[RMDB]
RNA sequence: GGGAACGACUCGAGUAGAGUCGAAAAGAUAUGGACAUCUCGAGGAGCUAUGAAGUCGGAAACGAUGGAGCUCUGACGAGAGUGUCCUAAGUCAAAACUGAGCCUAAGCUUCGGCUUAGGCUCAGAACUCUCUGACGAAGUUCGCUUCGUCAGAGAGAAAAGAAACAACAACAACAAC
Reactivity to DMS in 0.01 (KOAc 150mM, MgCl2 10mM, bicine 150mM(pH8.5), 24C), signal-to-noise 2, nucleotides 027 to 126: g010a010u000a300u010g000g000a000c000a050u000c000u000c000g020a300g000g000a020g020c030u020a230u000g000a100a180g000u000c000g000g010a110a050a180c010g000a010u000g000g010a010g000c000u000c000u000g000a140c120g010a000g000a000g010u000g020u000c000c010u000a000a080g010u000c030a040a010a070a270c000u000g010a040g040c020c000u000a040a000g000c000u000u030c250g030g060c000u000u000a030g010g000c020u000c000a000g000a020a180